[RMDB]
RNA sequence: GGGAACGACUCGAGUAGAGUCGAAAAAUUUCGGUCCUAUGCAAUAUGAACCCAUGAACCAUGUCAGGUCCUGACGGAAGCAGCAUUAAGUGGAUCAUCAUAUGUGCCGUAGGGUAGCCGAGAUUUAGAAAGACAAUUCCUGUUCGCAGGAAUUGUCCUGGAGUGGAGAGUUCGCUCUCCACUCCAGAAAAGAAACAACAACAACAAC
Reactivity to DMS in 0.01 (KOAc 150mM, MgCl2 10mM, bicine 150mM(pH8.5), 24C), signal-to-noise 1, nucleotides 027 to 156: a030u000u000u000c010g010g010u000c010c010u000a060u000g040c020a080a020u000a040u000g030a070a120c010c020c020a030u000g020a160a260c160c160a160u000g000u000c100a280g030g000u000c020c040u000g010a210c270g000g030a020a070g040c050a140g040c080a040u000u000a110a300g010u000g020g000a020u000c110a060u000c000a000u000a030u010g000u000g050c050c110g030u000a020g010g000g080u020a300g000c000c000g020a040g020a030u000u000u000a170g000a090a090a040g010a030c000a010a010u000u000c000c000u000g030u000u000c260g090c010a030g000g020a030a030u000u000g010u000c030
Reactivity to 2A3 in 0.01 (KOAc 150mM, MgCl2 10mM, bicine 150mM(pH8.5), 24C), signal-to-noise 2, nucleotides 027 to 156: a010u010u000u010c060g090g060u300c000c000u020a020u020g000c000a000a000u000a000u000g010a030a050c010c000c010a020u040g020a030a040c170c030a040u010g060u100c010a010g000g040u000c000c030u150g150a140c170g000g000a000a010g000c000a010g000c000a000u000u030a060a020g020u000g030g010a020u020c020a020u000c000a000u030a030u070g290u100g170c110c050g010u010a000g000g000g000u000a000g000c000c000g000a010g000a000u000u010u020a060g050a000a110a000g000a000c010a000a000u000u010c000c000u020g070u050u060c240g050c050a000g000g000a000a000u000u000g000u020c010